RNA sequence: GGGAACGACUCGAGUAGAGUCGAAAAAGAUAUGGAUAGGGAGGAGGCAGCAACAGCUAUGGCGUAACAUCGAUCGGAAACGAUCGUGGCCAUAGACAUGCUGUGGACGUUACCUAUCCUAAGUCAAGAUACCCAUAUCCUUCGGGAUAUGGGUAUCAAAAGAAACAACAACAACAAC
Reactivity to DMS in 0.01 (KOAc 150mM, MgCl2 10mM, bicine 150mM(pH8.5), 24C), signal-to-noise 4, nucleotides 027 to 126: a070g000a070u000a300u000g000g000a020u000a020g010g000g020a300g000g010a300g000g000c010a020g040c010a070a090c300a190g020c000u000a000u010g010g020c000g020u000a050a080c200a030u010c010g010a020u000c000g010g000a110a080a220c000g040a040u000c000g030u000g000g000c010c000a020u010a000g010a030c140a180u000g010c000u000g010u000g020g010a300c080g010u020u010a210c010c000u000a030u000c000c000u020a020a150g000u010c040a120a160
Reactivity to 2A3 in 0.01 (KOAc 150mM, MgCl2 10mM, bicine 150mM(pH8.5), 24C), signal-to-noise 3, nucleotides 027 to 126: a000g050a030u080a050u130g010g000a000u010a020g030g040g000a110g060g010a060g210g000c010a000g040c000a010a150c030a170g030c020u000a010u000g010g000c010g110u140a080a040c060a280u300c060g010a010u000c000g030g070a070a060a050c010g010a000u000c000g030u020g040g000c000c000a000u000a000g010a020c020a040u050g010c000u000g020u010g010g090a000c020g040u150u210a120c000c000u000a000u000c000c000u000a100a000g040u000c050a050a060
Record summary
This 177-nucleotide RNA was probed chemically with DMS and 2A3. It was measured as part of the RMDB library TTRDES.